[RMDB]
RNA sequence: GGGAACGACUCGAGUAGAGUCGAAAAGAGGCCUUCCUGCCUGCCUUCCAGCGUGGCCGCGCCCUGGCCCACCUGAGGCGGACGCAGGCAGAGAAGCUGCAGGAGCUGCUGCGGCGUCGGGAGCGUAGUAUGAUCAUCGGUUCGCCGAUGAUCAUACAAAAGAAACAACAACAACAAC
Reactivity to DMS in 0.01 (KOAc 150mM, MgCl2 10mM, bicine 150mM(pH8.5), 24C), signal-to-noise 3, nucleotides 027 to 126: g000a140g010g000c030c020u000u010c030c000u000g020c010c020u000g010c020c050u010u000c080c020a040g010c140g000u010g000g030c020c010g020c170g000c050c090c090u000g000g010c060c020c020a060c040c060u000g000a080g020g030c100g000g000a060c300g030c010a010g000g010c030a000g000a110g010a040a010g000c030u000g000c030a020g000g010a210g020c090u010g000c030u010g000c030g000g010c030g000u010c080g010g000g020a170g010c060g010u010a120
Reactivity to 2A3 in 0.01 (KOAc 150mM, MgCl2 10mM, bicine 150mM(pH8.5), 24C), signal-to-noise 2, nucleotides 027 to 126: g060a030g010g040c010c010u000u020c000c000u000g000c000c000u000g040c000c020u090u030c010c030a020g010c070g120u030g020g030c000c040g030c010g030c020c040c050u080g030g000c050c030c000a030c000c020u080g050a130g140g020c090g000g000a050c080g000c010a000g020g020c000a000g070a000g010a020a010g020c010u040g000c030a050g040g050a130g040c110u190g000c000u010g000c090g040g020c030g020u110c090g000g100g030a020g050c050g010u040a040

An RNA of 177 nucleotides, treated with DMS and 2A3 and read out base by base. Source: RMDB library OK2TRN, as collected in RNAgym. DMS adducts were read by reverse transcription with MarathonRT. Reactivities are given for positions 27 through 126.